[RMDB]
RNA sequence: GGGAACGACUCGAGUAGAGUCGAAAAGUCACCACUCAUUAUUUGUGAAGAUGCUGACCUUAACCGUGCCGCAGACAUUGCGGUUAUGGCCAACUUCUUUAGCUCAGGUCAAGUAUGUACCAACGGAAUAUCCACCUCAGUUCGCUGAGGUGGAUAUAAAAGAAACAACAACAACAAC
Reactivity to DMS in 0.01 (KOAc 150mM, MgCl2 10mM, bicine 150mM(pH8.5), 24C), signal-to-noise 3, nucleotides 027 to 126: g000u000c080a140c070c000a180c130u010c080a070u000u000a130u000u000u000g050u000g000a020a040g000a050u000g020c040u000g010a020c020c000u000u000a010a080c010c010g010u000g000c090c050g030c090a100g000a120c220a110u010u010g030c010g000g000u010u000a000u000g010g000c020c020a040a050c020u000u000c070u000u010u000a060g010c110u000c100a040g010g010u000c020a050a120g000u010a050u000g010u000a110c070c080a110a080c170g000g010a130
Reactivity to 2A3 in 0.01 (KOAc 150mM, MgCl2 10mM, bicine 150mM(pH8.5), 24C), signal-to-noise 3, nucleotides 027 to 126: g040u030c060a050c150c000a030c030u080c050a120u070u300a130u120u190u220g040u030g030a090a060g020a050u020g010c020u030g020a020c000c010u040u050a040a000c010c000g020u020g020c020c010g030c030a070g060a290c110a230u080u100g020c010g000g000u020u160a030u020g010g000c000c000a030a040c050u090u090c000u050u110u090a040g000c020u040c060a030g010g010u000c030a010a050g070u070a100u140g050u080a040c040c050a090a020c020g010g020a080
Conditions: 150 mM KOAc, 10 mM MgCl2 and 150 mM bicine (pH 8.5), 24 C. The record gives the reactivity of an RNA of 177 nucleotides to DMS and 2A3. For 2A3, 1,993 sequencing reads were counted. DMS adducts were read by reverse transcription with MarathonRT. Source: RMDB library OK2TST, as collected in RNAgym.